[RMDB]
RNA sequence: GGGAACGACUCGAGUAGAGUCGAAAAACUGCUUCUAGGCCCUCUGGAUAAUAUAUGUAUGUUAUACUAAGUCAUAAAUAUAAACAUAUCUAUAAUUGUUCCUAUGUCUAUUUGUAUACAUAUUAAGUUUAUGCUGAUGUCUGACUGUAAUCCAGUAAGGCAUUAAAUAUUUCGAUAUUUAAUGCCUAAAAGAAACAACAACAACAAC
Reactivity to 2A3 in 0.01 (KOAc 150mM, MgCl2 10mM, bicine 150mM(pH8.5), 24C), signal-to-noise 1, nucleotides 027 to 156: a010c010u000g130c010u080u070c050u220a060g100g000c000c000c000u050c030u060g010g000a000u030a120a100u050a050u010a040u060g000u030a040u030g030u100u000a040u000a010c010u080a060a040g000u040c000a010u090a190a240a050u140a150u170a150a170a000c080a120u140a120u000c060u210a100u210a300a300u120u200g030u090u080c020c030u010a000u000g030u000c010u060a180u090u040u060g000u030a030u020a030c010a010u060a060u100u160a080a100g010u060u040u040a050u080g010c050u080g050a050u100g100u000c030u050g050a090c010u030g020u090a050a000u050c000c000a070g100u200a040